Structure probing data (DMS) for a 177-nucleotide construct.

RNA sequence: GGGAACGACUCGAGUAGAGUCGAAAAAUGAUCGAACACAUCAUGCAGUCGAUGCAAUUCCCGGCGGAAUUGAUUGAGAAGGUUUGCGGAACUAUCUAAAACGUUGCAGACAAAGGACAAAGCAAUGACUCGAACGUUUUUUCGAAAACGUUCGAGUAAAAGAAACAACAACAACAAC
Reactivity to DMS in 0.01 (KOAc 150mM, MgCl2 10mM, bicine 150mM(pH8.5), 24C), signal-to-noise 1, nucleotides 027 to 126: a050u000g020a040u030c050g010a030a070c070a150c130a110u000c050a090u010g040c040a060g000u010c030g030a120u000g060c040a030a080u000u000c010c010c090g000g030c050g000g000a130a080u000u000g000a060u000u000g010a120g030a070a230g010g000u010u000u000g020c040g000g000a030a030c060u010a040u030c090u000a050a030a020a110c120g010u000u000g000c030a120g000a070c020a020a040a060g000g000a080c070a000a130a150g060c040a050a060u000g000